[RMDB]
The record gives the reactivity of an RNA of 170 nucleotides to DMS and 2A3. For 2A3, 35,184 sequencing reads were counted. The reactions ran in a buffer of 150 mM KOAc, 10 mM MgCl2 and 150 mM bicine (pH 8.5), at 24 C.
RNA sequence: GGGAACGACUCGAGUAGAGUCGAAAAUUGAAGGUAAAACAGCCUGUGGGUGAAACACACCCACAGAGCCCAUUGGGCGCUAGCACUCUGGUAUCACGGUACCUUUGUGCGCCUGUUUUACCGAAGGUAAGACGCAGGUUCGCCUGCGUCAAAAGAAACAACAACAACAAC
Reactivity to DMS in 0.01 (KOAc 150mM, MgCl2 10mM, bicine 150mM(pH8.5), 24C), signal-to-noise 8, nucleotides 027 to 129: u000u040g030a140a090g020g010u000a000a000a030a020c000a020g030c120c010u000g000u020g010g000g000u000g020a070a170a080c260a150c010a020c000c000c000a000c000a000g010a120g000c000c000c020a000u050u050g010g010g010c020g010c020u050a110g030c000a010c020u030c030u020g000g000u000a000u000c050a150c280g020g010u000a010c010c040u000u030u030g020u000g020c020g000c000c000u000g000u010u010u010u000a010c000c010g000a060a070g010g020u030a090a090
Reactivity to 2A3 in 0.01 (KOAc 150mM, MgCl2 10mM, bicine 150mM(pH8.5), 24C), signal-to-noise 7, nucleotides 027 to 129: u090u080g050a060a000g000g000u000a000a000a000a000c000a010g000c000c000u000g000u010g000g010g000u010g020a030a070a000c140a010c000a000c050c010c010a000c000a010g000a000g000c000c000c000a050u300u300g010g000g000c030g000c100u110a040g010c010a000c010u000c000u000g020g000u010a000u030c010a050c230g120g000u010a000c000c000u000u000u000g000u000g000c000g010c000c000u000g000u000u000u000u000a000c000c000g000a010a000g010g020u080a070a020